Chemical mapping of a 177-nucleotide RNA with 2A3 and DMS.
Values cover nucleotides 27 to 126.
The RNA was probed in 150 mM KOAc, 10 mM MgCl2 and 150 mM bicine (pH 8.5) at 24 C.
For 2A3, 5,419 sequencing reads were counted.
It was measured as part of the RMDB library TTRDES.
The DMS profile rests on 2,376 reads.
RNA sequence: GGGAACGACUCGAGUAGAGUCGAAAAGAUAUGGACAUUCGCGCUUUUGACGAAGCUACGUUCGGAAACGAACGGUCUUCGAUAAGCGUUCGUGUCCUAAGUCAAAAUCGUCGCUUCGGCGACGAAAUCUCAUGUUCAGGUUCGCCUGAACAUGAGAAAAAGAAACAACAACAACAAC
Reactivity to 2A3 in 0.01 (KOAc 150mM, MgCl2 10mM, bicine 150mM(pH8.5), 24C), signal-to-noise 3, nucleotides 027 to 126: g040a010u100a050u170g010g000a010c000a040u010u030c010g000c000g000c040u060u160u150u280g220a170c010g000a020a000g030c110u300a240c050g000u000u000c010g020g000a070a050a040c000g000a000a000c020g010g030u020c000u000u000c020g050a070u030a090a000g000c000g000u000u010c020g000u000g010u000c020c000u020a160a010g030u030c030a020a060a050a260u070c010g000u010c000g000c010u060u040c300g200g000c000g000a000c000g000a000a010a000
Reactivity to DMS in 0.01 (KOAc 150mM, MgCl2 10mM, bicine 150mM(pH8.5), 24C), signal-to-noise 3, nucleotides 027 to 126: g000a040u000a300u000g000g000a020c030a010u000u010c140g010c020g010c020u000u000u000u000g020a300c110g000a020a000g020c120u000a240c010g010u010u000c000g000g010a110a150a210c000g030a020a020c000g020g000u010c000u000u000c000g020a190u000a000a020g010c010g010u000u000c140g010u010g000u000c000c000u010a050a110g000u010c040a080a070a120a110u000c000g000u000c000g000c000u000u020c180g040g020c010g020a000c000g020a010a060a130